Record summary
The record gives the reactivity of an RNA of 207 nucleotides to DMS and 2A3. The 2A3 profile rests on 1,445 reads. Conditions: 150 mM KOAc, 10 mM MgCl2 and 150 mM bicine (pH 8.5), 24 C.
RNA sequence: GGGAACGACUCGAGUAGAGUCGAAAACAAAGACCCAUUUUGACAGCGGCCGUCUUCUUCUUCGUUCCGCGCAGUGUAGUUGGUCACAGAAGACUCCAAGGCGAUCCCCGACAAGCAGUAGAGUCCUGUCAGAGGCACAUUGAGCACACGGGGUUCAGCAUGAGAAAUGAUUCGUCAUUUCUCAUGCAAAAGAAACAACAACAACAAC
Reactivity to DMS in 0.01 (KOAc 150mM, MgCl2 10mM, bicine 150mM(pH8.5), 24C), signal-to-noise 2, nucleotides 027 to 156: c020a040a090a120g010a230c010c000c000a210u000u010u000u020g030a050c030a060g030c050g020g050c090c020g060u000c010u000u000c030u000u020c070u010u000c060g030u000u010c060c000g010c080g020c050a090g050u010g040u000a080g020u010u000g020g030u010c020a130c060a140g000a140a110g010a060c030u000c030c020a110a040g020g020c030g030a130u000c010c040c050c000g000a100c070a100a110g030c070a090g030u010a090g010a130g000u000c000c030u000g010u000c040a040g010a150g020g000c030a040c050a130u000u000g000a070g010c020a070c030a080c100g000g000g030g040u010u000c010a070
Reactivity to 2A3 in 0.01 (KOAc 150mM, MgCl2 10mM, bicine 150mM(pH8.5), 24C), signal-to-noise 3, nucleotides 027 to 156: c060a020a120a030g080a060c000c020c040a080u150u180u060u100g070a050c040a030g000c020g080g040c070c010g080u020c010u060u010c010u100u000c020u040u040c030g050u120u000c040c010g010c010g040c040a020g030u040g040u140a090g040u030u080g040g030u080c050a060c050a130g120a180a020g010a070c000u040c060c030a060a030g060g000c050g030a080u100c020c010c000c010g050a040c060a100a030g030c020a000g020u070a040g010a020g050u000c000c010u050g010u040c010a020g030a070g090g000c040a030c010a100u070u170g050a010g030c040a010c000a000c110g030g000g000g000u040u080c110a030
Reactivities are given for positions 27 through 156.